The record gives the reactivity of an RNA of 177 nucleotides to DMS and 2A3. It was measured as part of the RMDB library OK1LIB. 2A3 adducts were read by reverse transcription with SuperScript II with manganese. DMS adducts were read by reverse transcription with MarathonRT.
RNA sequence: GGGAACGACUCGAGUAGAGUCGAAAAGACUGGUGGGUGCGACUGCUAGUGGCAGGGUUAGUUUUGUGGGCCGGCCGUAACCGUGGUCACCGCAUAGCUCUGCUUGUAGGUCCUUGGCCUCUGGUAGCCCUAGCUGUGAUUUCGAUCACAGCUAGGGAAAAGAAACAACAACAACAAC
Reactivity to DMS in 0.01 (KOAc 150mM, MgCl2 10mM, bicine 150mM(pH8.5), 24C), signal-to-noise 2, nucleotides 027 to 126: g000a050c020u020g020g030u010g000g010g010u020g010c170g030a070c010u010g000c080u000a090g000u000g000g010c010a070g020g060g030u000u000a090g010u020u020u010u030g030u010g000g000g000c160c040g010g000c020c020g020u020a040a200c200c140g020u030g000g010u030c000a110c020c080g000c040a040u000a050g000c030u000c010u000g000c000u000u000g000u050a110g020g010u030c040c070u000u050g020g010c020c000u030c060u000g020g060u030a080g020
Reactivity to 2A3 in 0.01 (KOAc 150mM, MgCl2 10mM, bicine 150mM(pH8.5), 24C), signal-to-noise 5, nucleotides 027 to 126: g100a030c030u040g020g030u080g050g030g030u070g040c050g070a030c020u050g050c030u070a040g070u100g090g000c030a020g000g000g010u020u020a050g050u050u150u110u090g050u050g010g010g040c110c030g020g000c000c010g060u110a070a060c060c040g090u160g020g000u020c010a010c090c000g000c000a030u020a010g010c000u000c020u030g000c000u020u040g060u070a050g020g010u010c030c000u050u130g060g020c000c000u000c010u020g000g040u060a080g020